Structure probing data (2A3 and DMS) for a 177-nucleotide construct. The DMS profile rests on 1,618 reads. It was measured as part of the RMDB library M2PK50. Reactivities are given for positions 27 through 126. The RNA was probed in 150 mM KOAc, 10 mM MgCl2 and 150 mM bicine (pH 8.5) at 24 C.
RNA sequence: GGGAACGACUCGAGUAGAGUCGAAAAAUGAAUUGAUUCGUCAAUUCAUGACCGCAUGCGAGCCGAAAGGCAUUUUAUGCGUACGCUGGCGAAAGCCUAAAAAUCAUCGUGUCUUCGGACACGAUAAGCCUAUAUGCCCAUUCGUGGGCAUAUAGGCAAAAGAAACAACAACAACAAC
Reactivity to 2A3 in 0.01 (KOAc 150mM, MgCl2 10mM, bicine 150mM(pH8.5), 24C), signal-to-noise 2, nucleotides 027 to 126: a000u000g000a000a010u010u010g020a020u040u040c180g080u000c080a020a000u000u020c000a000u030g020a030c050c010g000c000a000u040g040c030g080a030g000c000c000g060a040a040a010g030g010c000a010u020u030u000u060a090u070g010c010g010u060a060c060g010c180u070g000g010c000g010a060a010a000g000c010c000u050a080a110a060a030a000u200c070a000u010c020g020u000g020u010c010u020u060c220g100g000a000c000a000c010g000a000u000a000a030
Reactivity to DMS in 0.01 (KOAc 150mM, MgCl2 10mM, bicine 150mM(pH8.5), 24C), signal-to-noise 2, nucleotides 027 to 126: a010u010g000a010a010u000u000g000a030u000u010c220g020u000c020a010a020u000u000c000a000u000g000a180c100c000g020c030a030u000g010c150g030a100g000c010c020g000a070a090a170g000g030c000a070u000u000u040u000a020u020g010c030g010u020a070c190g000c220u000g000g010c000g010a090a060a130g020c000c010u000a010a040a050a100a090u010c080a050u000c000g020u000g000u000c010u000u010c280g010g000a000c000a000c000g000a000u000a010a090